[RMDB]
RNA sequence: GGGAACGACUCGAGUAGAGUCGAAAAACUGGUUACGACCAGAUGCGAGUGAGGGCAACUCUGGGAUUAGCUCAAUGGGUGUGACGACCCUACCCUUCCGCAUUUGUAAAUAAUUGAGCCAGUCAAAUUUGCUUCAUUACUUCGGUAAUGAAGCAAAAAAAGAAACAACAACAACAAC
Reactivity to 2A3 in 0.01 (KOAc 150mM, MgCl2 10mM, bicine 150mM(pH8.5), 24C), signal-to-noise 5, nucleotides 027 to 126: a000c030u030g000g030u080u070a090c200g040a010c060c000a000g000a010u000g000c010g010a200g050u210g040a020g000g000g010c000a010a010c010u000c000u000g000g010g050a200u240u190a150g120c000u010c000a010a000u020g030g010g010u000g010u010g000a010c020g010a000c000c000c000u010a000c000c000c000u000u000c000c010g000c000a010u030u060u150g080u040a110a090a110u160a110a130u120u090g000a000g010c000c000a010g000u000c010a000a020a070
Reactivity to DMS in 0.01 (KOAc 150mM, MgCl2 10mM, bicine 150mM(pH8.5), 24C), signal-to-noise 3, nucleotides 027 to 126: a100c020u000g010g010u000u020a090c100g030a070c080c020a000g000a020u000g020c010g030a090g020u040g010a000g010g000g010c000a000a300c010u000c010u020g000g010g000a300u050u050a130g030c020u000c000a020a000u000g000g000g000u000g000u000g020a020c020g000a080c300c000c030u000a010c000c010c020u000u010c030c000g010c000a040u000u010u000g020u030a040a090a040u060a090a090u040u000g000a000g030c010c010a000g000u010c010a070a070a170